[RMDB]
RNA sequence: GGGAACGACUCGAGUAGAGUCGAAAAGCACAUCGGCCACGCCGUCCUCGCGGUGCAGCACCGCAUCGGCCAGCGCGCGGAUGCGGGCCCGGUCGGUGUCGGGCACGCCUAUCAGCUCUGAAAUCACCAAUCGUUACUUAUUCGUAAGUAACGAUUGAAAAGAAACAACAACAACAAC
Reactivity to 2A3 in 0.01 (KOAc 150mM, MgCl2 10mM, bicine 150mM(pH8.5), 24C), signal-to-noise 9, nucleotides 027 to 126: g050c030a010c010a050u030c020g010g000c010c010a020c040g010c010c010g040u070c030c100u100c110g010c020g000g010u080g050c070a030g020c060a180c060c010g000c010a010u010c040g220g000c010c030a140g180c080g010c030g000c020g130g020a020u070g010c010g010g010g000c000c050c000g000g010u010c020g000g010u020g010u030c040g000g020g010c050a030c060g030c000c000u090a120u140c050a040g030c020u020c030u130g120a090a090a100u150c070a070c080
Reactivity to DMS in 0.01 (KOAc 150mM, MgCl2 10mM, bicine 150mM(pH8.5), 24C), signal-to-noise 9, nucleotides 027 to 126: g020c110a070c050a030u000c030g020g010c020c030a300c060g000c010c020g010u000c110c110u010c220g010c020g000g010u000g020c250a080g000c060a140c010c010g010c010a010u000c010g000g020c010c020a170g020c280g010c120g020c010g000g010a030u000g000c000g010g010g010c020c070c070g020g010u000c020g010g010u000g000u000c040g000g000g010c020a080c100g000c020c030u000a100u010c090a100g010c030u000c040u000g010a060a090a110u010c090a130c150